Structure probing data (DMS and 2A3) for a 177-nucleotide construct. The RNA was probed in 150 mM KOAc, 10 mM MgCl2 and 150 mM bicine (pH 8.5) at 24 C.
RNA sequence: GGGAACGACUCGAGUAGAGUCGAAAACGAAGCUCUAAACCCAAGUCCCGGUGAAUGUCGGCCGUAACUAUAACGGUCCUAAGGUAGCGAAAUUCCUUGUCGGGUAAGUUCCGACCUGCACGAAUCGACAAGAAAUGUACUUCGGUACAUUUCUUGUAAAAGAAACAACAACAACAAC
Reactivity to DMS in 0.01 (KOAc 150mM, MgCl2 10mM, bicine 150mM(pH8.5), 24C), signal-to-noise 5, nucleotides 027 to 126: c120g030a100a100g000c040u000c040u010a060a110a140c030c000c010a100a120g000u000c020c020c030g010g010u000g010a070a060u000g000u010c150g000g000c030c010g010u000a090a090c160u020a100u020a070a050c000g000g000u000c020c040u000a050a050g010g000u010a070g010c060g000a070a060a130u010u000c000c000u000u020g000u000c050g000g000g010u010a060a120g000u010u010c020c010g000a050c010c050u000g010c050a050c090g000a070a060u010c080g010
Reactivity to 2A3 in 0.01 (KOAc 150mM, MgCl2 10mM, bicine 150mM(pH8.5), 24C), signal-to-noise 6, nucleotides 027 to 126: c020g040a040a010g040c020u020c030u100a060a090a080c000c000c010a030a010g070u020c030c010c020g040g000u050g050a110a060u120g040u100c050g000g000c000c000g040u050a070a070c040u060a070u060a300a030c010g010g050u060c000c020u060a070a030g040g000u020a010g040c020g060a060a020a040u090u050c010c010u030u050g020u020c020g000g000g020u050a090a060g030u080u040c000c010g000a010c010c010u060g020c050a020c070g060a060a090u100c040g040

It was measured as part of the RMDB libraries RFM100 and RFMREP. 2A3 adducts were read by reverse transcription with SuperScript II with manganese.